[RMDB]
RNA sequence: GGGAACGACUCGAGUAGAGUCGAAAAUUUUAGCUGAAUAAUGACGGCCGAAAGGGCUAACCCGGGAAUGACAAGGCGACUGUUAGACGAAGUCAGACUAGCUGAUAGAACUAGUUCGUAGUGCCCACGGGUGUCGCGGAUUCGUCUGCGGUGCUCGAAAAGAAACAACAACAACAAC
Reactivity to 2A3 in 0.01 (KOAc 150mM, MgCl2 10mM, bicine 150mM(pH8.5), 24C), signal-to-noise 9, nucleotides 027 to 126: u080u090u030u070a030g000c020u040g050a100a060u160a180a080u110g060a060c030g030g000c010c010g110a160a050a030g090g010g000c020u020a040a040c000c010c000g010g020g040a090a110u100g020a040c030a050a050g050g020c020g040a030c030u040g050u110u090a040g010a050c050g040a080a010g030u030c020a010g020a060c020u040a020g030c030u040g060a130u070a150g070a060a030c010u010a010g030u050u040c040g020u050a030g050u020g070c010c010c010a030
Reactivity to DMS in 0.01 (KOAc 150mM, MgCl2 10mM, bicine 150mM(pH8.5), 24C), signal-to-noise 9, nucleotides 027 to 126: u000u010u000u000a070g010c030u000g000a110a110u010a100a100u010g010a180c070g010g010c020c020g010a040a070a090g010g010g010c080u010a080a080c060c010c010g010g000g010a080a090u000g010a070c080a070a120g010g010c050g010a060c050u000g010u000u000a070g010a080c060g010a070a080g010u000c040a090g010a080c050u000a030g010c030u000g010a140u010a090g010a070a070c020u000a020g000u000u000c070g010u000a070g010u000g000c010c010c030a180